Annotation: This 177-nucleotide RNA was probed chemically with DMS. For DMS, 500 sequencing reads were counted. The RNA was probed in 150 mM KOAc, 10 mM MgCl2 and 150 mM bicine (pH 8.5) at 24 C. Reactivities are given for positions 27 through 126. It was measured as part of the RMDB library OK2TRN.
RNA sequence: GGGAACGACUCGAGUAGAGUCGAAAAAGUGCUACCUUGACCUACAAUGACUACCUGUUCACAUGCCGUACGCUCGAUCAGCUGGCAACAAGAGGAUCUGCGAAAAACACUGACGAAGUCUACUACAAAGAUCGAGAGGGUUCGCCCUCUCGAUCUUAAAAGAAACAACAACAACAAC
Reactivity to DMS in 0.01 (KOAc 150mM, MgCl2 10mM, bicine 150mM(pH8.5), 24C), signal-to-noise 1, nucleotides 027 to 126: a070g070u000g030c050u000a130c030c000u000u000g000a060c040c040u000a110c110a230a100u000g000a040c060u000a060c050c000u000g000u000u000c120a050c260a090u020g020c030c050g000u010a070c190g000c000u000c080g000a110u000c150a060g010c090u000g000g000c050a070a060c130a060a050g000a110g000g010a040u020c040u000g030c040g020a020a040a020a110a070c030a050c120u000g010a080c050g000a170a130g030u020c060u000a090c090u000a050c200a080